[RMDB]
RNA sequence: GGGAACGACUCGAGUAGAGUCGAAAAAAAGUACAGACCAACCCACUACGUGCCUCUGACUGCGCAUAUGGAAACAUCCCCAUUUCGCUGGACAUCCCGAAUGCGGCCUUCAUGCGCAUAUCGGAUGUACGAGAGACUCUUUCGAGAGUCUCUCGUAAAAAGAAACAACAACAACAAC
Reactivity to DMS in 0.01 (KOAc 150mM, MgCl2 10mM, bicine 150mM(pH8.5), 24C), signal-to-noise 1, nucleotides 027 to 126: a020a060a100g010u000a070c080a030g000a060c050c040a120a150c050c010c020a080c200u020a050c110g010u000g000c020c050u000c090u000g000a140c160u050g000c070g020c120a040u000a050u000g000g000a180a050a080c080a080u000c080c020c000c070a070u000u000u030c080g020c110u000g000g000a020c040a050u010c110c020c110g000a030a020u000g000c020g050g020c040c080u010u050c190a110u000g000c000g030c010a030u000a190u020c010g010g020a090u000g020